[RMDB]
RNA sequence: GGGAACGACUCGAGUAGAGUCGAAAACAUGGGAUCGUACUGAUGAUCCGAUCCUACAUGCUGUAUCGUCUAGGCAGCGUGGAUCUGAGGAUCGGUACCUAGACAUGCAUGACACACAUGGUACGUAUCGCUUUUUACGGUUCGCCGUAAAAAGCGAAAAAGAAACAACAACAACAAC
Reactivity to 2A3 in 0.01 (KOAc 150mM, MgCl2 10mM, bicine 150mM(pH8.5), 24C), signal-to-noise 3, nucleotides 027 to 126: c020a110u120g040g000g010a000u060c010g010u070a010c030u080g170a150u090g020a040u000c000c010g010a000u020c000c000u040a050c000a020u050g030c000u020g040u130a150u220c100g050u010c120u140a060g080g000c010a040g010c130g080u100g130g030a090u060c080u130g100a060g060g000a010u000c010g050g000u020a000c000c020u000a010g020a030c040a030u080g020c020a030u080g040a050c030a000c010a000c000a170u050g070g070u100a060c060g040u040a030
Reactivity to DMS in 0.01 (KOAc 150mM, MgCl2 10mM, bicine 150mM(pH8.5), 24C), signal-to-noise 2, nucleotides 027 to 126: c070a040u000g000g000g000a020u010c030g020u020a110c100u020g020a100u010g020a120u010c050c010g000a010u010c010c000u010a180c030a020u000g000c030u010g000u000a040u010c120g030u000c060u000a040g000g000c030a050g040c040g050u010g030g000a060u010c120u000g020a160g050g010a020u000c000g010g030u000a080c040c020u010a070g000a030c040a050u010g020c050a030u020g020a090c110a080c180a190c030a060u000g000g000u000a120c160g000u000a170